[RMDB]
RNA sequence: GGGAACGACUCGAGUAGAGUCGAAAAAGCCUCCCGAUACGAGUUUGCCAGGACCUAUCAAGUUUGGAGUCAUCCGGCCCGUAGGGGAGAAUAGAACACCGGGGGGUGAUCCACCAGGAGAAGGAGCCCCCAGUAUUAUGUUCGCAUAAUACUGGGGAAAAGAAACAACAACAACAAC
Reactivity to DMS in 0.01 (KOAc 150mM, MgCl2 10mM, bicine 150mM(pH8.5), 24C), signal-to-noise 1, nucleotides 027 to 126: a140g040c180c040u020c000c000c000g000a150u000a040c140g000a110g000u000u000u010g070c020c030a090g020g050a190c040c060u000a100u010c040a090a140g000u000u010u000g020g040a170g020u010c140a110u010c020c020g000g000c030c010c090g010u000a080g000g000g010g010a000g020a070a070u010a060g000a190a040c120a050c070c020g000g000g000g000g000g000u000g000a080u000c020c000a170c120c040a090g000g010a100g000a040a060g000g010a180g030c120